[RMDB]
Chemical mapping of a 177-nucleotide RNA with DMS.
The RNA was probed in 150 mM KOAc, 10 mM MgCl2 and 150 mM bicine (pH 8.5) at 24 C.
Reactivities are given for positions 27 through 126.

RNA sequence: GGGAACGACUCGAGUAGAGUCGAAAAGAUAUGGACUCUUCACUAUCAAAGUGGUAGGGAGCUGUAUUCGGAAACGAAUAAACAGCAUCGAUCUACGACCACUUUGAUAGUGAAGAGUCCUAAGUCACCAAAAUUAUUACUUCGGUAAUAAUUUUGGAAAAGAAACAACAACAACAAC
Reactivity to DMS in 0.01 (KOAc 150mM, MgCl2 10mM, bicine 150mM(pH8.5), 24C), signal-to-noise 2, nucleotides 027 to 126: g000a050u000a300u000g010g030a000c000u010c000u010u010c000a020c000u000a000u000c010a000a000a010g020u010g010g010u000a060g000g000g010a070g000c000u000g000u010a060u000u000c010g000g000a180a110a300c000g010a050a010u000a020a130a100c020a000g030c000a170u030c150g000a270u010c100u000a180c080g020a060c040c000a000c020u010u020u000g000a020u010a020g010u010g010a000a000g000a010g000u000c000c000u000a010a090g000u010c030a250